[RMDB]
RNA sequence: GGGAACGACUCGAGUAGAGUCGAAAAAGGAAUGCCUUAUCUCACAGGAUUCUACUCAAAAGACCUUAUCAUUGAAGCAGUAAAUAUAUCCUACACAAACGCCUGAGCCCUACUAAUAACAUUAAUUGCCACAUCCCUAACCGCUGCCUACAGCACUACAAUUCUUACCCUUCGGGGUAAGAAUUGUAAAAGAAACAACAACAACAAC
Reactivity to 2A3 in 0.01 (KOAc 150mM, MgCl2 10mM, bicine 150mM(pH8.5), 24C), signal-to-noise 2, nucleotides 027 to 156: a020g070g010a070a040u100g080c000c000u060u080a120u020c080u060c050a040c030a020g070g000a010u020u010c010u010a050c070u040c100a020a070a110a000g040a060c030c000u140u100a090u110c040a080u030u090g050a010a020g020c050a000g090u120a010a130a010u140a020u010a030u110c010c020u090a010c070a010c010a060a140a050c050g020c000c020u040g010a010g010c010c010c010u040a060c040u050a070a100u080a110a000c040a030u080u140a050a080u080u070g020c000c000a030c000a080u030c000c010c000u030a060a040c030c020g000c050u030g030c050c020u030a050c010a020g070c040a020c030u020